[RMDB]
Source information:
Structure probing data (2A3) for a 177-nucleotide construct.
RNA sequence: GGGAACGACUCGAGUAGAGUCGAAAAGCAUACGUUACAAUAUCUGCGUUCGUAUGCGGUAGGCAACGCAGAUAUUGUAAGCCUACCACCGUACGGUGGACAUGCGAAAGCAUGUCCAUCGUACGGAGCACCAAGUACCCUUCGGGGUACUUGGUGCAAAAGAAACAACAACAACAAC
Reactivity to 2A3 in 0.01 (KOAc 150mM, MgCl2 10mM, bicine 150mM(pH8.5), 24C), signal-to-noise 1, nucleotides 027 to 126: g060c030a050u040a190c100g090u010u010a000c010a000a000u010a000u000c000u000g010c000g010u000u050c060g070u140a080u300g100c040g020g040u130a020g010g090c000a000a000c000g000c000a000g010a020u000a000u000u000g000u000a000a000g020c000c010u080a090c030c030a070c010c010g000u000a000c000g000g000u000g010g000a000c000a000u000g010c010g020a090a010a000g000c000a000u000g000u000c000c000a000u000c000g000u010a000c000g000g000a000
For 2A3 the reverse transcriptase was SuperScript II with manganese. The reactions ran in a buffer of 150 mM KOAc, 10 mM MgCl2 and 150 mM bicine (pH 8.5), at 24 C. For 2A3, 891 sequencing reads were counted.